[RMDB]
RNA sequence: GGGAACGACUCGAGUAGAGUCGAAAAAGCAACAAAGGGUAAGGUUUAAUCGCCGAAGUUAGAUUUCGGAUAGCUGCGGAAGUGGCGGGAUUGGUAUAGUAGAUCAGUAAUGAUCUGAUAUGUAGGGAUCCACCAGCAUAUUCGUAUGCUGGUGGAUAAAAGAAACAACAACAACAAC
Reactivity to DMS in 0.01 (KOAc 150mM, MgCl2 10mM, bicine 150mM(pH8.5), 24C), signal-to-noise 4, nucleotides 027 to 126: a090g000c140a050a080c130a070a060a120g020g000g020u020a060a080g000g030u020u020u020a070a060u000c190g010c010c000g000a030a030g010u020u050a090g010a130u020u010u010c050g020g000a080u010a050g010c050u000g010c070g010g040a070a120g010u030g010g000c100g000g000g000a100u010u020g010g010u020a020u000a050g010u020a010g000a010u000c010a030g000u080a110a130u000g000a000u000c000u000g010a060u000a020u000g000u010a070g010g000g010
Reactivity to 2A3 in 0.01 (KOAc 150mM, MgCl2 10mM, bicine 150mM(pH8.5), 24C), signal-to-noise 2, nucleotides 027 to 126: a000g070c050a030a050c050a080a040a190g060g000g020u140a040a040g060g010u130u080u140a080a060u110c060g000c030c000g060a000a000g010u090u160a080g000a170u010u000u000c000g040g020a090u100a030g030c040u100g030c040g050g070a060a030g020u070g060g050c060g010g040g000a060u020u150g040g000u000a050u010a150g100u040a000g000a000u020c010a030g050u190a080a130u040g020a020u010c000u000g020a020u040a050u070g040u010a030g030g000g070